[RMDB]
RNA sequence: GGGAACGACUCGAGUAGAGUCGAAAACAUCGUCACUGCCAGGGUCGACCCGCCGCUGCAGGCCGGCGUGCGGGUGUUCGAUCCCGACGGGGCUGAGGUGGCCGCGCUCGUCGAGCACGACGGACGGUCUACGCCGAAUGUUCGCAUUCGGCGUAGAAAAAGAAACAACAACAACAAC
Reactivity to DMS in 0.01 (KOAc 150mM, MgCl2 10mM, bicine 150mM(pH8.5), 24C), signal-to-noise 1, nucleotides 027 to 126: c030a100u000c030g010u000c010a140c040u000g040c000c030a070g000g000g030u000c000g000a060c030c010c000g010c000c010g000c000u000g000c020a190g000g020c190c030g000g000c010g000u020g040c010g000g010g000u020g010u010u000c030g010a030u000c000c010c020g020a030c020g000g000g030g030c040u000g010a130g020g030u010g000g010c040c030g010c020g010c000u000c000g030u010c020g020a280g000c240a100c070g000a060c030g010g000a040c030g010g000
Reactivity to 2A3 in 0.01 (KOAc 150mM, MgCl2 10mM, bicine 150mM(pH8.5), 24C), signal-to-noise 1, nucleotides 027 to 126: c010a040u020c020g080u020c010a020c210u100g030c000c000a060g000g000g020u010c000g020a000c000c010c000g010c020c000g030c000u060g030c080a230g280g000c150c010g030g030c020g080u210g010c010g070g010g020u040g060u080u120c030g020a000u040c000c010c020g030a000c010g000g020g040g000c050u100g010a080g060g100u100g020g060c050c010g020c020g000c050u130c040g070u000c030g000a090g140c110a030c120g030a000c020g030g030a010c000g030g000

An RNA of 177 nucleotides, treated with DMS and 2A3 and read out base by base. The DMS profile rests on 1,394 reads. The data come from the RNA Mapping Database (RMDB), library OK2TST. The RNA was probed in 150 mM KOAc, 10 mM MgCl2 and 150 mM bicine (pH 8.5) at 24 C. Values cover nucleotides 27 to 126. DMS (dimethyl sulfate) methylates the pairing face of unpaired adenines and cytosines.